About this RNA
Chemical mapping of a 177-nucleotide RNA with DMS and 2A3. Source: RMDB library OK2TST, as collected in RNAgym.
RNA sequence: GGGAACGACUCGAGUAGAGUCGAAAAGAGCGGCGCCAUGCCCCCAAGCAGGCUGAUGCGUUCGGCGCCCUGACCAAUCAACACUUCGAGCGUUUCGCUGACAUAAGCUGCCGAGUGCUUCAGAAGAUAAUACGAUUAUCUUCGGAUAAUCGUAUUAAAAAGAAACAACAACAACAAC
Reactivity to DMS in 0.01 (KOAc 150mM, MgCl2 10mM, bicine 150mM(pH8.5), 24C), signal-to-noise 9, nucleotides 027 to 126: g010a130g010c130g020g010c030g010c020c050a130u010g010c040c020c020c030c060a120a130g010c110a090g010g020c050u000g010a070u000g010c020g010u000u000c080g010g020c020g010c010c020c020u000g010a140c060c050a120a100u010c110a060a070c110a070c060u000u000c050g000a040g010c020g010u000u000u010c070g020c030u000g000a090c100a090u010a070a100g010c030u000g010c030c020g000a060g010u000g000c020u000u000c050a060g000a090a080g000a190
Reactivity to 2A3 in 0.01 (KOAc 150mM, MgCl2 10mM, bicine 150mM(pH8.5), 24C), signal-to-noise 6, nucleotides 027 to 126: g070a010g020c100g010g000c000g000c020c020a090u210g030c000c020c000c030c030a010a030g050c030a030g140g000c050u080g050a080u090g010c030g040u070u170c100g020g010c000g000c000c000c010u030g070a070c020c000a040a100u170c060a060a060c020a020c100u090u070c050g040a050g010c000g000u050u110u090c030g000c030u030g020a040c010a130u190a070a060g020c030u040g000c050c000g010a020g020u010g000c000u040u040c020a080g010a120a010g010a060
For DMS the reverse transcriptase was MarathonRT. Conditions: 150 mM KOAc, 10 mM MgCl2 and 150 mM bicine (pH 8.5), 24 C.